[RMDB]
RNA sequence: GGGAACGACUCGAGUAGAGUCGAAAACAUCUCGACAAGAGGCGGCAGUCCUCAGUGCUCUUACUCUUUUCUGUAAAGAGGAGACUGCUGGACUCGCCGCCCAAGUUCGAGCAUGAGCCACAGUUCCGAGCGAAGGGACGCGGGGGAGAGGGACAGACAAAUCUCUUAUCUUCGGAUAAGAGAUUUGAAAAGAAACAACAACAACAAC
Reactivity to DMS in 0.01 (KOAc 150mM, MgCl2 10mM, bicine 150mM(pH8.5), 24C), signal-to-noise 2, nucleotides 027 to 156: c020a100u040c040u010c020g000a060c050a300a140g000a160g000g030c020g010g050c030a060g000u010c010c000u000c010a060g020u020g030c070u010c020u020u000a300c000u010c020u000u000u000u000c300u020g000u020a050a040a040g030a040g020g010a090g040a100c010u000g030c120u000g020g020a030c000u010c140g030c040c030g070c020c000c000a050a200g030u000u000c000g030a050g020c040a060u000g000a100g020c020c060a040c040a200g000u000u000c040c020g000a090g020c030g030a200a150g000g000g020a030c090g030c100g000g000g010g030g010a110g010a110g050g000g000a170c060a130g010a190
Reactivity to 2A3 in 0.01 (KOAc 150mM, MgCl2 10mM, bicine 150mM(pH8.5), 24C), signal-to-noise 4, nucleotides 027 to 156: c010a020u000c000u010c000g010a010c010a100a090g110a170g070g010c010g010g000c000a000g010u010c010c000u000c010a030g020u150g220c010u000c020u090u270a280c010u040c000u080u070u110u100c180u240g300u300a030a020a010g010a000g000g010a010g010a010c000u010g050c090u010g000g000a010c000u040c100g000c010c000g000c000c000c000a010a010g020u040u030c000g000a000g010c030a020u050g020a010g040c020c010a050c020a060g040u070u010c030c020g050a050g030c060g070a080a070g000g020g030a060c040g020c040g010g030g000g000g010a090g030a040g060g000g020a030c040a050g040a010
An RNA of 207 nucleotides, treated with DMS and 2A3 and read out base by base. 2A3 is a SHAPE reagent: it acylates the 2'-hydroxyl of flexible nucleotides of all four kinds. For DMS the reverse transcriptase was MarathonRT. The reactions ran in a buffer of 150 mM KOAc, 10 mM MgCl2 and 150 mM bicine (pH 8.5), at 24 C.